[RMDB]
RNA sequence: GGGAACGACUCGAGUAGAGUCGAAAAAGUCAGAGGGCGCUACCAUGCAAACUAGGGCUGGCUACUCUUGCACAGAAUCACAUCUCGAUAAUUGUCAGUGCAAGCAGGACAAUUAUACCAUUUAAUGAAAACGUUUACCUGUUCGCAGGUAAACGAAUCCUGAUCUAACGUUCGCGUUAGAUCAGGAAAAAGAAACAACAACAACAAC
Reactivity to DMS in 0.01 (KOAc 150mM, MgCl2 10mM, bicine 150mM(pH8.5), 24C), signal-to-noise 2, nucleotides 027 to 156: a110g020u010c020a150g030a100g030g010g040c180g000c060u030a150c000c040a110u010g000c050a080a140a190c090u000a140g050g030g050c010u010g030g030c080u010a150c030u000c040u000u010g000c020a100c030a070g040a080a100u000c060a110c050a140u010c030u010c010g040a150u010a010a040u000u000g010u000c040a110g010u000g080c060a090a110g040c110a030g000g010a060c030a000a020u000u000a080u010a110c090c020a110u030u000u000a090a150u010g010a140a080a060a170c060g050u000u010u000a030c020c000u010g030u000u000c300g000c000a050g010g010u010a000a010a000c000g000a040a060
Reactivity to 2A3 in 0.01 (KOAc 150mM, MgCl2 10mM, bicine 150mM(pH8.5), 24C), signal-to-noise 3, nucleotides 027 to 156: a000g010u020c010a020g000a040g030g050g010c030g000c040u150a280c080c040a100u240g010c020a020a030a050c030u060a030g010g040g060c000u010g000g040c010u040a070c010u000c000u040u030g000c000a010c000a000g110a070a080u090c050a100c010a260u080c120u020c100g090a020u000a050a020u030u000g010u000c000a010g010u000g010c010a010a000g000c020a010g020g020a010c000a000a010u040u040a030u030a100c030c050a090u120u120u220a120a080u170g160a030a010a010a050c000g010u000u010u000a000c010c000u000g050u020u040c040g020c090a000g000g000u010a000a000a000c000g000a000a010